[RMDB]
RNA sequence: GGGAACGACUCGAGUAGAGUCGAAAAUAUCGCCACGCAAUCUUGGAUUGGCGGUGCAGUGCAGGCGGUGCUAAUUGCCAUCAAUGUGAUGAUGUACCUGCCGUUUAUGAAGAUAAGCGAGAAUAUCCUGGGGUGAUUAAUUCGUUAAUCACCCCAGAAAAGAAACAACAACAACAAC
Reactivity to 2A3 in 0.01 (KOAc 150mM, MgCl2 10mM, bicine 150mM(pH8.5), 24C), signal-to-noise 2, nucleotides 027 to 126: u080a010u020c020g000c030c000a020c080g030c030a040a160u040c030u010u130g090g000a030u040u170g020g090c000g000g010u010g000c010a040g020u030g100c000a010g040g100c060g110g000u030g000c020u110a280a110u130u120g010c040c040a020u060c050a070a170u180g030u110g060a170u050g000a030u060g030u030a020c000c000u110g000c010c030g020u000u040u030a170u130g060a040a020g010a070u030a010a150g020c020g030a090g030a090a050u060a060u120c020
Reactivity to DMS in 0.01 (KOAc 150mM, MgCl2 10mM, bicine 150mM(pH8.5), 24C), signal-to-noise 2, nucleotides 027 to 126: u010a110u000c050g010c010c030a140c150g000c100a110a050u020c050u020u010g010g000a060u010u010g090g020c030g010g010u000g010c020a100g020u010g030c040a090g000g040c140g000g010u010g000c090u000a070a090u020u000g020c020c010a040u000c070a130a140u000g030u010g010a040u000g000a100u000g010u000a030c010c000u000g020c010c000g010u000u000u000a040u020g000a110a030g000a030u010a090a080g010c000g000a110g000a110a120u010a120u000c040